[RMDB]
RNA sequence: GGGAACGACUCGAGUAGAGUCGAAAAAGACGGGCCCGCAUCAGCUUCUGCGCGUUCUGUCGACGCCCAGCUCGACGAGCUGAACCGUAUGCAAUUGCCCUACGAGGAGUACCAGCGGCGAUACCGAAGAUAAGUCGCAGUUCGCUGCGACUUAUCUAAAAGAAACAACAACAACAAC
Reactivity to 2A3 in 0.01 (KOAc 150mM, MgCl2 10mM, bicine 150mM(pH8.5), 24C), signal-to-noise 2, nucleotides 027 to 126: a000g070a000c020g000g010g030c020c020c000g000c020a070u050c020a000g060c040u100u050c000u130g050c050g000c000g090u060u000c070u150g130u070c060g020a000c040g050c000c030c010a010g000c060u050c080g180a160c040g030a010g000c010u020g020a030a020c010c010g020u060a080u120g020c090a060a180u120u100g030c010c000c000u000a080c070g040a040g040g020a040g050u040a070c000c000a030g020c020g030g000c010g000a060u060a060c020c030g050a050
Reactivity to DMS in 0.01 (KOAc 150mM, MgCl2 10mM, bicine 150mM(pH8.5), 24C), signal-to-noise 3, nucleotides 027 to 126: a090g000a060c050g020g000g020c040c090c050g010c080a090u010c050a060g010c040u000u000c060u000g010c110g040c150g000u000u010c030u000g000u010c040g000a070c070g000c050c040c020a120g010c190u000c020g010a050c130g000a030g000c020u000g010a050a090c040c040g000u010a050u000g010c110a120a070u010u000g010c020c020c030u000a130c070g000a090g000g020a110g010u000a060c070c050a050g010c040g000g010c020g000a080u000a090c040c040g010a080

Chemical mapping of a 177-nucleotide RNA with 2A3 and DMS. For 2A3, 2,732 sequencing reads were counted. Conditions: 150 mM KOAc, 10 mM MgCl2 and 150 mM bicine (pH 8.5), 24 C. DMS (dimethyl sulfate) methylates the pairing face of unpaired adenines and cytosines. Reactivities are given for positions 27 through 126. The data come from the RNA Mapping Database (RMDB), library OK2TRN.